[RMDB]
RNA sequence: GGGAACGACUCGAGUAGAGUCGAAAAGGCGCCAGGAGGCAGCAGCGACGGCGCAGCGUGGGACGGCCAGGCGCGACGGGAGGGAAGCAACCGGUUGCAGUCCGGCCUCCUGUACCUGGCUGGCCCGACGUAGAGGGCCAUUCGUGGCCCUCUACGUAAAAGAAACAACAACAACAAC
Reactivity to DMS in 0.01 (KOAc 150mM, MgCl2 10mM, bicine 150mM(pH8.5), 24C), signal-to-noise 4, nucleotides 027 to 126: g000g000c000g030c000c000a200g000g000a120g010g000c050a070g010c080a110g040c010g010a100c160g000g000c020g010c000a090g010c120g020u020g020g000g020a020c000g030g000c010c010a000g010g000c300g000c170g020a040c030g000g010g020a000g010g000g000a090a120g010c300a120a300c010c000g000g010u020u070g010c180a220g000u030c000c000g000g000c010c000u000c000c000u020g000u010a070c000c020u000g000g000c010u000g000g000c000c000c000g010
Reactivity to 2A3 in 0.01 (KOAc 150mM, MgCl2 10mM, bicine 150mM(pH8.5), 24C), signal-to-noise 4, nucleotides 027 to 126: g060g000c020g000c000c020a050g090g100a090g110g050c050a080g030c070a030g020c060g030a050c020g020g000c020g000c020a030g030c050g060u200g000g010g010a030c010g000g000c010c010a000g030g000c060g000c100g140a010c000g000g000g010a000g000g010g040a080a040g090c040a100a050c000c010g000g030u090u300g120c090a050g070u030c000c010g000g040c010c000u000c000c000u010g000u010a010c000c000u000g000g000c010u000g000g000c010c000c020g000